[RMDB]
RNA sequence: GGGAACGACUCGAGUAGAGUCGAAAAAUGAUGGCUGAAGCAAAAUUGUAUAGCCCAAUUUCUUCAACUUUUGAAGCGCUGGUUGGCGGUCAGGCAUUGUCUUGAAGAGGAAUUGGGCCCUUUCUGUUUUCGGUGCAUCUCAUUGAUUUGCCGAGCAACUGAUAUGACGAUUCGUCGUCAUAUCAGUAAAAGAAACAACAACAACAAC
Reactivity to DMS in 0.01 (KOAc 150mM, MgCl2 10mM, bicine 150mM(pH8.5), 24C), signal-to-noise 1, nucleotides 027 to 156: a040u000g010a040u010g000g000c010u000g000a040a030g000c050a010a020a040a060u000u020g000u000a130u010a110g020c020c030c010a030a030u000u000u010c000u000u000c030a070a100c040u000u010u000u040g020a120a110g020c050g030c040u020g030g020u000u030g010g040c040g020g040u010c040a120g000g000c020a140u010u000g030u010c040u000u000g030a020a120g000a080g010g000a040a030u000u010g010g030g050c010c040c040u000u000u000c030u010g020u000u000u000u000c020g010g030u000g010c080a030u000c030u010c090a180u000u010g020a180u010u010u000g010c000c030g000a130g000c090a190
Reactivity to 2A3 in 0.01 (KOAc 150mM, MgCl2 10mM, bicine 150mM(pH8.5), 24C), signal-to-noise 5, nucleotides 027 to 156: a000u070g010a010u020g000g000c010u020g000a000a000g010c000a020a020a030a100u170u050g050u100a250u240a140g010c000c000c000a010a000u050u010u010c000u020u010c020a040a060c040u100u120u090u220g100a140a090g060c040g010c070u080g130g180u160u190g100g030c050g010g010u030c020a010g020g060c030a060u040u100g030u090c060u030u060g030a030a020g010a010g040g080a050a010u010u000g000g000g000c000c000c000u010u010u000c020u020g000u120u260u020u150c030g020g040u110g190c000a020u000c020u030c040a040u010u120g110a090u060u060u150g110c040c030g050a050g070c020a020

About this RNA
An RNA of 207 nucleotides, treated with DMS and 2A3 and read out base by base. For DMS, 3,623 sequencing reads were counted. Values cover nucleotides 27 to 156. Conditions: 150 mM KOAc, 10 mM MgCl2 and 150 mM bicine (pH 8.5), 24 C.